Structure probing data (2A3 and DMS) for a 177-nucleotide construct. For DMS the reverse transcriptase was MarathonRT.
[RMDB]
RNA sequence: GGGAACGACUCGAGUAGAGUCGAAAAAAUCAAGAUGCUUUGGUCGUGGUCGGAACAGCGCCGUGCACAAGGGGAUCUGCAAAGCACGGCACGUAAGCACUCAGAUGCGAAAGUAGGAACUGCGUUAAGACCUCCUUAUAUUCGUAUAAGGAGGUCUAAAAGAAACAACAACAACAAC
Reactivity to 2A3 in 0.01 (KOAc 150mM, MgCl2 10mM, bicine 150mM(pH8.5), 24C), signal-to-noise 4, nucleotides 027 to 126: a000a000u240c120a080a020g050a080u090g030c030u050u050u050g040g010u050c020g070u030g000g070u030c060g060g010a060a040c030a020g030c010g000c050c010g030u030g010c040a070c030a140a070g040g050g000g100a080u070c030u100g070c080a040a020a020g020c020a000c000g000g000c000a000c010g020u020a070a010g020c010a000c030u120c030a040g020a080u050g020c030g050a100a080a030g070u080a040g030g080a030a030c010u040g010c010g040u030u040a010
Reactivity to DMS in 0.01 (KOAc 150mM, MgCl2 10mM, bicine 150mM(pH8.5), 24C), signal-to-noise 7, nucleotides 027 to 126: a050a050u020c070a070a060g000a090u010g010c050u000u010u000g010g010u000c040g020u010g000g010u000c020g000g010a090a070c080a090g010c060g010c020c010g010u010g010c020a090c160a120a130g000g010g010g000a080u030c050u010g000c140a070a100a090g020c010a010c030g000g000c020a010c050g000u020a050a090g010c040a040c060u010c100a070g010a080u000g000c030g010a050a050a080g020u010a060g010g010a060a050c060u000g000c090g010u010u010a110

Notes:
The RNA was probed in 150 mM KOAc, 10 mM MgCl2 and 150 mM bicine (pH 8.5) at 24 C. It was measured as part of the RMDB libraries RFM100 and RFMREP.